Description: Structure probing data (DMS and 2A3) for a 207-nucleotide construct. It was measured as part of the RMDB library RSTRND. For 2A3, 4,947 sequencing reads were counted.
RNA sequence: GGGAACGACUCGAGUAGAGUCGAAAAGCAUCAGCUAGAGGGAUCUACCGAUGGGUUCGGUCGCGGGACUCGUCGGGACACCAACCGCGACUGGGAUCGUCAUCCUGGCUAGUUCGCGUGAUCAGGAGAUCCGAGUAGAGGCAUAGCGAACUACGCAUCUAUUGUACACCUUCGGGUGUACAAUAGAAAAAGAAACAACAACAACAAC
Reactivity to DMS in 0.01 (KOAc 150mM, MgCl2 10mM, bicine 150mM(pH8.5), 24C), signal-to-noise 2, nucleotides 027 to 156: g000c030a100u000c040a100g010c050u010a060g000a150g000g000g140a080u000c030u000a100c010c020g030a030u000g020g020g010u000u000c030g010g010u000c050g020c060g030g000g020a040c000u000c020g010u000c030g020g000g000a110c100a070c100c080a110a120c050c020g000c010g000a030c020u070g000g010g010a030u000c040g030u000c040a140u000c000c000u000g020g030c030u010a070g010u000u000c010g020c030g000u000g000a080u010c040a030g030g020a120g010a030u000c010c020g000a230g040u020a040g000a070g010g020c040a070u000a100g010c010g000a030a050c030u000a100c110g040c110a250
Reactivity to 2A3 in 0.01 (KOAc 150mM, MgCl2 10mM, bicine 150mM(pH8.5), 24C), signal-to-noise 4, nucleotides 027 to 156: g050c040a050u140c060a040g050c040u090a030g010a070g120g050g000a090u040c040u120a070c010c000g010a000u010g000g010g000u010u000c040g070g000u010c010g010c000g010g000g000a010c010u000c020g010u000c000g020g020g000a010c020a020c030c100a110a060c040c010g000c000g010a000c010u010g000g000g000a010u010c000g000u000c020a010u000c000c030u000g020g000c020u030a060g010u010u010c000g000c000g020u010g000a040u020c000a010g020g010a010g010a010u000c000c010g000a000g010u300a010g020a030g000g030c100a130u220a050g000c000g000a010a000c010u060a060c120g020c040a080
The DMS profile rests on 4,507 reads.